[RMDB]
RNA sequence: GGGAACGACUCGAGUAGAGUCGAAAACGGGAUAUUACCUGGUGUCGUGGAUACGGUGGUGAAGAUAGCGGCUCGGAUGCCGUCACCGGAGGAAUAUGCGACUCAUGUCUCCCCGGUUAUUGUAGCUACCUAUACGCGAUUUCGAUCGCGUAUAGGUAAAAGAAACAACAACAACAAC
Reactivity to 2A3 in 0.01 (KOAc 150mM, MgCl2 10mM, bicine 150mM(pH8.5), 24C), signal-to-noise 3, nucleotides 027 to 126: c030g000g040g040a070u060a110u220u130a130c000c020u040g110g060u030g000u020c010g010u000g020g030a040u020a110c050g000g060u110g080g080u130g090a070a070g030a170u110a030g060c020g040g000c030u040c150g160g060a110u290g000c010c020g060u080c000a000c000c020g000g050a110g000g020a070a050u060a000u160g010c060g020a030c000u000c100a010u080g010u030c040u030c030c000c000c000g030g000u010u080a080u000u190g030u060a040g020c010u010
Reactivity to DMS in 0.01 (KOAc 150mM, MgCl2 10mM, bicine 150mM(pH8.5), 24C), signal-to-noise 1, nucleotides 027 to 126: c060g000g000g000a110u030a090u000u090a070c020c000u000g000g010u050g000u040c030g030u000g050g020a090u030a070c050g000g000u010g000g000u020g030a190a110g000a070u000a180g000c030g000g000c030u010c110g000g010a120u030g040c010c020g060u000c050a040c000c020g000g000a240g010g010a120a020u000a080u020g010c040g000a100c020u030c010a090u010g000u000c060u010c030c000c000c040g020g000u000u060a040u020u030g010u000a060g000c060u060
Conditions: 150 mM KOAc, 10 mM MgCl2 and 150 mM bicine (pH 8.5), 24 C.
This 177-nucleotide RNA was probed chemically with 2A3 and DMS.
The 2A3 profile rests on 1,151 reads.
For 2A3 the reverse transcriptase was SuperScript II with manganese.